[RMDB]
RNA sequence: GGGAACGACUCGAGUAGAGUCGAAAACGCGAAGUGUAAUCAAUGAGUAAAGCAAAUCUCAAGCCAUAAAUUGGUAAUUCCUUCUUCUUCAACGGUUUGGACGAGCCGACUCGCUUCGCCUGCUACCGAAAGAGAGUUAGUUCGCUAACUCUCUUUCAAAAGAAACAACAACAACAAC
Reactivity to 2A3 in 0.01 (KOAc 150mM, MgCl2 10mM, bicine 150mM(pH8.5), 24C), signal-to-noise 4, nucleotides 027 to 126: c040g000c010g010a020a000g030u040g050u250a110a150u190c110a030a100u150g020a020g030u120a100a080a030g010c020a020a060a080u040c110u020c080a000a010g010c000c000a100u150a190a140a050u120u040g050g020u070a090a150u180u210c020c000u040u080c000u120u040c000u120u110c060a060a040c080g020g000u000u020u030g040g010a020c020g010a010g010c020c000g030a030c000u010c020g000c010u000u010c000g010c000c000u030g030c020u070a080c010c050
Reactivity to DMS in 0.01 (KOAc 150mM, MgCl2 10mM, bicine 150mM(pH8.5), 24C), signal-to-noise 6, nucleotides 027 to 126: c230g010c020g010a020a020g020u000g010u000a120a120u020c170a100a080u010g010a030g000u000a060a140a130g010c050a040a120a100u000c010u000c040a020a040g010c010c000a080u010a030a060a110u000u000g010g010u010a070a130u010u010c060c070u000u000c100u010u000c120u000u000c100a070a120c160g000g010u000u000u010g000g000a030c030g000a300g010c020c060g010a080c040u000c010g010c040u010u000c000g010c010c100u010g020c130u010a120c120c050

Structure probing data (2A3 and DMS) for a 177-nucleotide construct.
It was measured as part of the RMDB library RFMREP.
The DMS profile rests on 5,860 reads.
For 2A3 the reverse transcriptase was SuperScript II with manganese.
DMS adducts were read by reverse transcription with MarathonRT.